[RMDB]
RNA sequence: GGGAACGACUCGAGUAGAGUCGAAAAGACGCGAGAGACGCGAGACGCGCAAUGGCAGAAGCCGCAAUAGAUUAUACGACGCAAGAGGCAAGACGGAGAGCGCGCAGCUUGCGUCAAUAACCAAGAAAUACCUCAUAUGGUUCGCCAUAUGAGGUAUAAAAGAAACAACAACAACAAC
Reactivity to 2A3 in 0.01 (KOAc 150mM, MgCl2 10mM, bicine 150mM(pH8.5), 24C), signal-to-noise 8, nucleotides 027 to 126: g060a010c030g010c030g050a060g020a010g030a120c020g030c010g050a030g010a030c040g020c010g000c050a030a100u110g050g000c020a010g070a220a020g030c030c010g020c020a030a080u060a090g040a030u080u090a050u090a200c140g010a000c000g020c000a010a010g010a020g050g020c030a070a050g060a060c060g050g050a080g020a020g130c030g020c010g000c000a020g020c000u000u010g000c000g000u010c000a000a000u020a010a000c020c020a030a010g070a090a120
Reactivity to DMS in 0.01 (KOAc 150mM, MgCl2 10mM, bicine 150mM(pH8.5), 24C), signal-to-noise 5, nucleotides 027 to 126: g000a080c060g020c050g010a090g030a060g000a080c030g000c020g000a080g010a110c060g010c050g020c020a110a130u020g000g010c050a080g030a150a150g000c020c000g020c160a080a070u010a090g010a100u020u010a050u030a120c130g010a040c030g000c030a010a010g010a080g000g020c030a060a260g000a070c020g020g020a120g010a120g020c010g010c260g000c080a040g010c000u000u000g010c000g000u000c000a010a010u020a030a100c060c070a100a110g010a060a080